Conditions: 150 mM KOAc, 10 mM MgCl2 and 150 mM bicine (pH 8.5), 24 C. An RNA of 177 nucleotides, treated with 2A3 and DMS and read out base by base. For DMS the reverse transcriptase was MarathonRT. The DMS profile rests on 836 reads. For 2A3, 1,174 sequencing reads were counted.
[RMDB]
RNA sequence: GGGAACGACUCGAGUAGAGUCGAAAAGAUAUGGACAAUGAUGGUGAACUACGAAUCUGUGUCGGAAACGACACUAGAUUCGCACUUGAGUCCUAAGUCAAAAGUGAUGGUGUUCGCACCAUCACAACAAGGUGGCAUCGUUCGCGAUGCCACCUUGAAAAGAAACAACAACAACAAC
Reactivity to 2A3 in 0.01 (KOAc 150mM, MgCl2 10mM, bicine 150mM(pH8.5), 24C), signal-to-noise 1, nucleotides 027 to 126: g050a010u080a030u120g000g000a000c000a070a300u110g040a020u120g060g040u080g000a170a180c180u240a110c300g030a010a010u000c020u020g000u010g010u000c010g030g040a020a060a000c000g000a000c000a000c000u000a000g000a000u000u010c000g000c010a010c010u030u000g060a000g020u020c010c020u040a040a040g040u060c050a210a050a000a030g000u000g000a000u020g000g070u010g020u080u090c300g000c080a020c000c000a050u000c000a000c000a000a000
Reactivity to DMS in 0.01 (KOAc 150mM, MgCl2 10mM, bicine 150mM(pH8.5), 24C), signal-to-noise 1, nucleotides 027 to 126: g030a030u000a260u010g030g000a000c010a300a240u000g010a190u000g000g000u000g030a080a060c150u000a300c040g000a000a000u010c000u010g010u000g000u010c000g000g000a060a050a170c000g000a010c010a000c000u010a010g000a000u000u000c020g010c010a000c060u000u000g000a120g000u000c000c000u000a050a070g000u000c000a050a060a090a060g070u000g010a060u000g000g010u000g000u010u000c300g010c010a010c010c000a010u000c000a000c000a030a080